[RMDB]
RNA sequence: GGGAACGACUCGAGUAGAGUCGAAAAACGGACCAGUACGACGUGCGUCAGCUCCAGAGUAGCGGGGGUUGGAAAUCCCUCGUGAAUGUGGCAGGCAUCGACUGCCAAGACUAAGUACUCUCCGAGACGUCAAUAUGCAAUUCGUUGCAUAUUGACGAAAAGAAACAACAACAACAAC
Reactivity to 2A3 in 0.01 (KOAc 150mM, MgCl2 10mM, bicine 150mM(pH8.5), 24C), signal-to-noise 9, nucleotides 027 to 126: a000c030g010g010a020c020c040a010g010u030a010c030g040a020c090g090u150g050c020g020u040c020a010g010c010u030c020c010a030g020a000g150u030a010g010c000g000g000g000g010g010u040u070g090g090a020a070a050u070c000c000c000u000c000g020u030g020a110a040u180g010u040g090g000c100a070g060g000c020a110u110c120g060a040c040u130g000c010c000a040a010g020a010c010u020a060a010g010u020a010c000u000c000u000c010c010g010a020g030a020
Reactivity to DMS in 0.01 (KOAc 150mM, MgCl2 10mM, bicine 150mM(pH8.5), 24C), signal-to-noise 6, nucleotides 027 to 126: a090c060g000g000a060c130c170a050g020u000a020c020g010a100c210g020u020g000c050g020u010c050a090g010c030u000c050c030a070g000a070g000u000a270g000c010g010g000g000g000g000u000u000g000g030a100a090a090u010c000c000c000u000c000g030u010g000a070a110u050g020u000g000g010c080a060g000g010c050a140u030c170g000a060c010u020g000c010c020a090a070g010a110c200u000a080a160g000u000a030c000u000c120u000c010c000g010a130g000a200